Overview:
Conditions: 150 mM KOAc, 10 mM MgCl2 and 150 mM bicine (pH 8.5), 24 C. This 177-nucleotide RNA was probed chemically with 2A3. Reactivities are given for positions 27 through 126.

RNA sequence: GGGAACGACUCGAGUAGAGUCGAAAAGGUGGAGUACGAGGAAGUUGGCGCUUUGCUGCUUCGGCAUGCACCACCCAUUGCAGAACAACAGCGCCCGCAGUCAGAAAACUUAAGUGCCGUGCGUCUAGGUCCGGUAUCAUUUCGAUGAUACCGGACCAAAAGAAACAACAACAACAAC
Reactivity to 2A3 in 0.01 (KOAc 150mM, MgCl2 10mM, bicine 150mM(pH8.5), 24C), signal-to-noise 1, nucleotides 027 to 126: g000g000u000g000g020a000g010u000a070c050g050a020g020g100a160a000g010u190u260g040g010c120g000c020u130u100u120g030c000u000g020c000u010u050c040g000g000c020a070u190g030c000a030c000c000a010c000c000c000a000u000u120g000c030a020g040a210a080c060a020a000c000a050g030c010g100c000c060c040g080c000a000g010u020c020a000g010a110a140a020a100c070u150u170a090a000g000u040g030c000c000g000u010g000c020g000u000c090u210a010